Structure probing data (DMS and 2A3) for a 177-nucleotide construct. 2A3 adducts were read by reverse transcription with SuperScript II with manganese. Source: RMDB library RFM100, as collected in RNAgym. The RNA was probed in 150 mM KOAc, 10 mM MgCl2 and 150 mM bicine (pH 8.5) at 24 C. The DMS profile rests on 2,138 reads.
RNA sequence: GGGAACGACUCGAGUAGAGUCGAAAAACUGCACUAUGAUUACGAUCAUAGUGCAGAGGGGAUGGUGAGGGGUGCGAGCGCAGAGCCCCAGGGGCGGUGAAGAAGGAUUAUAACAGCGUCUGACCAACACCAUUCUCCAGUUCGCUGGAGAAUGGUGAAAAGAAACAACAACAACAAC
Reactivity to DMS in 0.01 (KOAc 150mM, MgCl2 10mM, bicine 150mM(pH8.5), 24C), signal-to-noise 2, nucleotides 027 to 126: a280c000u000g030c000a000c020u000a000u000g030a030u020u020a140c200g000a030u000c000a000u000a020g010u000g010c000a000g020a100g000g000g010g000a210u000g000g010u000g010a140g040g000g000g050u010g000c000g030a060g030c030g040c050a030g000a220g010c000c020c020c020a120g010g010g000g040c050g020g000u030g020a080a020g030a060a080g020g020a090u000u000a120u030a140a190c100a050g000c060g030u010c070u000g000a170c000c030a070a150
Reactivity to 2A3 in 0.01 (KOAc 150mM, MgCl2 10mM, bicine 150mM(pH8.5), 24C), signal-to-noise 2, nucleotides 027 to 126: a000c020u000g010c000a000c000u000a000u000g000a000u080u100a040c260g100a000u030c000a000u000a000g000u000g000c000a000g000a000g020g030g000g000a070u100g020g030u130g050a090g000g000g000g030u080g050c010g020a070g000c020g000c090a040g020a020g070c010c010c030c030a000g000g000g010g050c040g000g120u180g030a060a000g040a010a030g020g020a040u140u110a060u170a060a100c070a040g000c000g110u030c020u060g030a010c000c010a030a000